Structure probing data (2A3 and DMS) for a 177-nucleotide construct.
For 2A3 the reverse transcriptase was SuperScript II with manganese.
RNA sequence: GGGAACGACUCGAGUAGAGUCGAAAAGAAGAGAAAGGAGACACACGGACAGUCUCCAGAGGUUCCUAAGGGCUCGAUCGCGCCUGCCGGGAAUCAUGGACUCCCGGUUGUCCAUGAAAGAAGAAGACGCCAUUAUCACUUUCGAGUGAUAAUGGCGAAAAGAAACAACAACAACAAC
Reactivity to 2A3 in 0.01 (KOAc 150mM, MgCl2 10mM, bicine 150mM(pH8.5), 24C), signal-to-noise 2, nucleotides 027 to 126: g080a010a010g130a010g040a110a150a100g030g000a020g010a010c010a040c010a030c170g030g080a020c060a100g000u010c000u000c020c000a000g010a030g010g000u010u070c000c000u010a060a070g020g000g010c000u030c080g110a170u090c030g030c040g040c060c010u020g020c050c020g000g000g000a000a010u020c000a000u090g040g000a000c010u050c010c020c010g050g000u030u010g010u000c000c000a010u150g100a020a050a210g160a090a000g010a020a000g100a030
Reactivity to DMS in 0.01 (KOAc 150mM, MgCl2 10mM, bicine 150mM(pH8.5), 24C), signal-to-noise 2, nucleotides 027 to 126: g000a140a150g040a080g000a170a120a150g000g000a030g020a030c000a090c170a110c160g000g000a060c090a060g000u000c010u000c000c050a030g020a040g000g010u000u000c000c000u000a020a090g030g000g030c000u000c070g050a070u030c100g000c280g020c010c010u000g010c090c290g010g000g020a000a070u000c030a020u010g000g000a040c100u020c010c010c050g010g000u010u000g000u000c010c010a000u060g030a100a130a120g010a050a040g000a170a200g000a200

About this RNA: The 2A3 profile rests on 1,103 reads.